The record gives the reactivity of an RNA of 177 nucleotides to 2A3. Conditions: 150 mM KOAc, 10 mM MgCl2 and 150 mM bicine (pH 8.5), 24 C.

[RMDB]
RNA sequence: GGGAACGACUCGAGUAGAGUCGAAAAUUCAUGUCUGAGUUGGACAGGGGAUCUUGACAGUUUCAUGGUUCGCUGCCAGAUCUAUCUUUCCAGCUCACGCGUGGAAAAAGUAUGCUUCGGCAUACAACCAUCCGAUUCAGUUCGCUGAAUCGGAUGGAAAAGAAACAACAACAACAAC
Reactivity to 2A3 in 0.01 (KOAc 150mM, MgCl2 10mM, bicine 150mM(pH8.5), 24C), signal-to-noise 1, nucleotides 027 to 126: u000u010c000a010u000g050u000c020u060g010a000g030u020u000g000g000a010c010a020g010g030g000g000a000u010c030u040u080g000a060c010a020g000u010u120u230c120a100u200g160g090u180u180c040g010c000u010g000c000c010a000g000a000u000c000u010a300u080c000u020u010u020c000c010a010g000c010u010c000a000c020g030c000g000u010g000g000a040a050a000a010a000g000u000a010u010g010c020u050u050c200g090g000c010a000u020a000c010a000a030

Source: RMDB library RFMREP, as collected in RNAgym.